[RMDB]
RNA sequence: GGGAACGACUCGAGUAGAGUCGAAAAGACACGACGGAGACGUCGUGUCAAAGAGUGGGAAACCACUCAAAGAGCCACAGCUUCGGCUGUGGCUCAAGGCGCGGCGAGGUCCGCGGAACAAACCGAACCUCCAUAUAUGGUUCGCCAUAUAUGGAGGAAAAGAAACAACAACAACAAC
Reactivity to DMS in 0.01 (KOAc 150mM, MgCl2 10mM, bicine 150mM(pH8.5), 24C), signal-to-noise 3, nucleotides 027 to 126: g000a020c000a010c000g020a020c000g000g010a300g000a210c000g030u000c020g000u000g000u000c000a040a080a090g010a000g020u000g000g000g000a140a120a230c000c000a000c000u000c000a040a100a110g000a020g000c010c000a020c000a000g010c020u000u010c280g020g010c010u020g040u000g000g020c000u010c000a000a030g000g010c010g030c000g030g020c040g000a210g010g000u010c020c010g010c010g020g020a070a120c300a040a030a060c010c040g010a160a280
Reactivity to 2A3 in 0.01 (KOAc 150mM, MgCl2 10mM, bicine 150mM(pH8.5), 24C), signal-to-noise 3, nucleotides 027 to 126: g000a000c000a000c010g000a000c000g020g000a070g030a040c010g010u000c000g010u000g000u000c000a000a000a000g000a010g000u010g000g000g000a020a050a070c000c000a000c000u000c000a040a040a010g000a000g020c010c010a020c000a020g040c020u130u180c300g110g000c020u010g010u010g000g040c010u010c000a000a000g010g000c010g000c000g000g020c060g020a050g020g040u060c000c010g010c000g010g040a020a010c030a030a010a010c000c000g010a040a040
An RNA of 177 nucleotides, treated with DMS and 2A3 and read out base by base. Conditions: 150 mM KOAc, 10 mM MgCl2 and 150 mM bicine (pH 8.5), 24 C. For 2A3, 9,825 sequencing reads were counted. For DMS, 2,763 sequencing reads were counted.